[RMDB]
RNA sequence: GGGAACGACUCGAGUAGAGUCGAAAAUUAAUUAUGUAGUCUCGCUUUUGGACCAGAUUAAUUUCCAUCCUUUAUUAUCCUUGUGCUUGUAAUAUUGCUUAGUUCAAUGCACAUGAGAAACGUAAAGGCUACAGGGUUUAUUCGUAAACCCUGUAGCAAAAGAAACAACAACAACAAC
Reactivity to 2A3 in 0.01 (KOAc 150mM, MgCl2 10mM, bicine 150mM(pH8.5), 24C), signal-to-noise 8, nucleotides 027 to 126: u010u010a020a010u050u070a280u250g050u070a070g030u030c070u080c150g220c190u120u120u220u300g020g000a000c010c010a000g000a020u010u010a010a010u010u030u010c020c020a060u030c030c000u040u050u010a040u080u020a030u020c000c010u000u000g010u000g010c000u030u020g070u190a080a080u110a110u180u210g120c060u100u110a040g030u090u030c010a020a030u210g000c000a000c000a000u010g130a150g010a200a060a000c010g010u010a000a010a000g040
Reactivity to DMS in 0.01 (KOAc 150mM, MgCl2 10mM, bicine 150mM(pH8.5), 24C), signal-to-noise 2, nucleotides 027 to 126: u010u000a000a030u020u000a060u010g010u030a080g000u000c000u020c200g010c300u000u020u050u000g030g060a040c000c020a070g000a010u020u000a000a010u000u000u000c080c010a150u030c060c000u010u020u010a030u010u000a300u010c010c000u000u010g000u000g000c010u020u000g010u030a020a040u000a090u000u050g010c130u030u030a070g000u010u000c010a000a000u010g000c010a000c000a020u010g000a090g000a020a030a120c300g000u000a010a010a010g030